[RMDB]
RNA sequence: GGGAACGACUCGAGUAGAGUCGAAAAACCGCCGGGGUCGCCGAUGUUGAUAUCGAUCACCGGUAAGGUGCCGGCGAUCCUCGGAACGAUGAUGGGUCCGACGCUGAAGUGGGUGACCCCGAGGGCGUACACCGCACUGCUUCGGCAGUGCGGUGUAAAAAGAAACAACAACAACAAC
Reactivity to 2A3 in 0.01 (KOAc 150mM, MgCl2 10mM, bicine 150mM(pH8.5), 24C), signal-to-noise 1, nucleotides 027 to 126: a000c000c000g000c000c010g000g000g080g000u000c000g000c000c000g000a000u030g100u150u290g160a150u060a150u280c000g000a000u000c000a010c010c070g000g000u000a030a040g030g050u290g040c030c000g010g000c000g000a000u040c060c070u000c000g010g000a030a000c150g130a210u300g070a120u230g000g090g140u000c000c000g030a000c050g130c090u250g030a090a040g010u120g100g000g010u150g000a000c000c250c000c000g000a250g000g000g000c000g000

This 177-nucleotide RNA was probed chemically with 2A3. For 2A3, 330 sequencing reads were counted. The RNA was probed in 150 mM KOAc, 10 mM MgCl2 and 150 mM bicine (pH 8.5) at 24 C.